[RMDB]
RNA sequence: GGGAACGACUCGAGUAGAGUCGAAAAGGAUACAAGCAAGGAGAAGCCACCUUCGCUUCACGCACCAUACAGAACCAAGCCUCCGACACUCUCAGCAAGAUCAACAACUCCAUCCUUGGCUUUGGAACAAUAAUAAAGUCUUCGGACUUUAUUAUUGAAAAGAAACAACAACAACAAC
Reactivity to DMS in 0.01 (KOAc 150mM, MgCl2 10mM, bicine 150mM(pH8.5), 24C), signal-to-noise 9, nucleotides 027 to 126: g010g010a120u020a070c160a040a070g010c040a050a060g000g000a110g010a090a060g000c050c050a130c030c020u000u000c110g000c040u000u010c070a080c080g010c050a070c040c040a060u020a060c120a090g000a100a080c070c050a060a090g000c030c020u010c030c040g010a070c070a050c020u000c020u000c040a070g000c080a060a060g010a090u020c060a040a050c140a050a080c070u010c020c020a080u010c010c020u010u010g000g010c010u000u010u010g000g010a110a150
Reactivity to 2A3 in 0.01 (KOAc 150mM, MgCl2 10mM, bicine 150mM(pH8.5), 24C), signal-to-noise 9, nucleotides 027 to 126: g070g000a030u060a140c050a030a040g020c020a020a020g050g020a090g040a100a020g040c020c010a040c010c000u030u060c070g020c030u040u040c050a050c060g030c010a030c010c010a020u090a150c050a040g090a070a020c020c010a040a020g030c000c010u030c010c010g040a020c020a020c050u030c010u020c020a020g030c030a050a060g010a120u110c020a010a090c010a030a040c030u020c030c010a060u040c020c000u060u060g050g000c000u070u040u050g040g020a050a030